[RMDB]
RNA sequence: GGGAACGACUCGAGUAGAGUCGAAAAGGGAGAUCCGAGCAGAGGCAUAGCGAACUGCGCACGGUGAAGCCUUGAGGGAACGCCGUAGGACCCGGGUUCGAUUCCCGGCGGCUCCACCGAAGGGCCAGAUAUGGCGUGCAUUCGUGCACGCCAUAUCAAAAGAAACAACAACAACAAC
Reactivity to DMS in 0.01 (KOAc 150mM, MgCl2 10mM, bicine 150mM(pH8.5), 24C), signal-to-noise 3, nucleotides 027 to 126: g000g000g040a190g000a120u040c010c020g000a150g050c030a020g000a090g010g000c080a070u030a090g010c020g000a070a080c030u010g010c070g050c100a190c000g000g000u000g010a090a040g000c000c000u010u000g020a280g000g000g000a020a150c070g030c000c040g000u000a060g010g000a180c140c070c000g000g000g010u000u050c130g000a300u020u010c000c000c000g000g000c230g010g000c010u030c020c070a030c020c020g010a130a110g010g000g000c020c060a050
Reactivity to 2A3 in 0.01 (KOAc 150mM, MgCl2 10mM, bicine 150mM(pH8.5), 24C), signal-to-noise 3, nucleotides 027 to 126: g080g010g040a070g010a070u010c000c000g000a040g000c050a020g020a060g020g070c070a100u160a080g030c040g070a070a060c040u040g000c020g000c020a050c050g040g030u050g040a050a000g010c000c000u020u090g030a060g000g010g010a030a030c050g000c000c010g040u050a090g020g230a120c000c010c010g000g000g000u060u160c050g000a160u060u020c000c000c000g000g020c010g000g000c020u040c010c030a020c000c020g010a050a050g010g000g000c000c010a000

Chemical mapping of a 177-nucleotide RNA with DMS and 2A3. The 2A3 profile rests on 2,471 reads. DMS adducts were read by reverse transcription with MarathonRT.